Structure probing data (2A3) for a 207-nucleotide construct. 2A3 adducts were read by reverse transcription with SuperScript II with manganese. The RNA was probed in 150 mM KOAc, 10 mM MgCl2 and 150 mM bicine (pH 8.5) at 24 C. For 2A3, 539 sequencing reads were counted.
[RMDB]
RNA sequence: GGGAACGACUCGAGUAGAGUCGAAAACAUCGAAACCUGGAACAAGGCCAAUCUCGCUACCACCAAAGAAGCUAACGUACAGCUGAUUGGUGCCGCUGGUGCUAUCGUUCUUUCGGCAGUCGCUGUCGGUGUAGCUUCGAGGUAAUUGUGGACGAGGGAUUCCUACAUGCUUCGGCAUGUAGGAAUCAAAAGAAACAACAACAACAAC
Reactivity to 2A3 in 0.01 (KOAc 150mM, MgCl2 10mM, bicine 150mM(pH8.5), 24C), signal-to-noise 1, nucleotides 027 to 156: c040a090u210c070g090a090a040a070c000c030u010g010g120a190a100c140a110a080g010g000c010c030a060a170u040c000u000c010g050c040u040a060c000c150a040c020c010a040a040a140g010a000a000g010c000u010a000a000c010g160u160a020c080a000g030c020u300g050a030u080u120g200g200u110g010c010c000g010c020u000g010g030u090g020c010u130a110u300c180g030u080u010c000u070u090u060c000g010g000c000a010g020u000c000g000c000u000g030u030c000g000g180u120g030u000a000g000c000u010u000c000g000a000g010g020u050a040a010u160u080g000u010g010g100a050c010g000a000g040g020